The record gives the reactivity of an RNA of 177 nucleotides to 2A3 and DMS. For DMS, 12,325 sequencing reads were counted. 2A3 is a SHAPE reagent: it acylates the 2'-hydroxyl of flexible nucleotides of all four kinds. It was measured as part of the RMDB library OK2TST. Reactivities are rounded to 0.1 and cut off at 0 and 3.
RNA sequence: GGGAACGACUCGAGUAGAGUCGAAAACAGUAACAGGUCGAGGAUGCUAGUUGAAAAUGUUAUGUAAGCUGCAUGCUUUUUACAAAUGGUAGUGGUUCUCAUGUCCAGCAAUGGCCACUGCACCGUCGUAUCAUUUAACGUUCGCGUUAAAUGAUACAAAAGAAACAACAACAACAAC
Reactivity to 2A3 in 0.01 (KOAc 150mM, MgCl2 10mM, bicine 150mM(pH8.5), 24C), signal-to-noise 8, nucleotides 027 to 126: c030a010g040u050a030a030c030a070g020g110u090c050g040a020g060g010a010u040g000c060u100a020g020u040u030g060a020a040a040a080u210g040u210u130a060u130g050u060a040a030g010c020u020g020c030a030u050g040c000u070u070u040u080u110a070c050a040a110a060u130g060g000u020a020g020u010g020g010u140u050c060u030c050a040u080g040u020c050c020a020g000c030a060a090u050g020g010c010c000a000c000u030g030c040a030c010c030g160u150c050
Reactivity to DMS in 0.01 (KOAc 150mM, MgCl2 10mM, bicine 150mM(pH8.5), 24C), signal-to-noise 8, nucleotides 027 to 126: c080a110g010u010a080a090c140a060g000g020u010c120g010a080g010g010a050u000g010c040u010a050g010u010u000g000a070a070a090a090u000g010u000u010a070u010g010u000a080a070g010c060u000g000c070a050u000g010c020u000u000u000u000u010a050c110a050a070a080u010g010g010u000a020g030u000g010g010u000u010c080u010c070a080u000g000u000c050c040a050g000c150a080a070u000g010g000c020c020a020c040u000g010c080a110c110c080g010u000c180